[RMDB]
RNA sequence: GGGAACGACUCGAGUAGAGUCGAAAAGGGAUGCGCUUUAUUCGCGAUAGCGUAAUGCCUCAAUCAAGGCAGCAAGUGCUGGCGGGUGCUGUCGCCGGUUCGGGUAAUAGAGGUGGUAGCCCUCGAACUAAUCAGUGACGUUCGCGUCACUGAUUAGAAAAGAAACAACAACAACAAC
Reactivity to DMS in 0.01 (KOAc 150mM, MgCl2 10mM, bicine 150mM(pH8.5), 24C), signal-to-noise 3, nucleotides 027 to 126: g010g000g010a090u010g010c050g000c070u010u000u010a120u010u000c120g020c050g020a110u010a050g010c010g020u000a070a100u000g000c010c000u010c180a110a130u010c170a100a080g000g000c020a030g010c090a070a070g020u000g010c030u000g000g010c080g000g010g010u000g010c030u010g020u000c060g000c030c040g010g000u000u020c090g040g010g000u000a040a080u000a120g000a090g010g030u020g000g020u000a090g010c070c020c010u000c070g000a100a200
Reactivity to 2A3 in 0.01 (KOAc 150mM, MgCl2 10mM, bicine 150mM(pH8.5), 24C), signal-to-noise 2, nucleotides 027 to 126: g000g000g000a020u050g030c020g020c030u020u060u160a110u060u220c050g010c060g090a100u080a030g000c000g010u000a100a060u060g070c040c000u040c010a040a110u080c030a020a060g070g000c000a000g020c060a080a050g040u040g110c040u050g030g000c010g030g020g010u080g020c040u050g030u060c030g040c040c010g020g000u020u060c030g000g000g030u030a030a030u030a100g050a020g050g020u110g030g040u030a010g030c000c010c000u000c010g030a080a050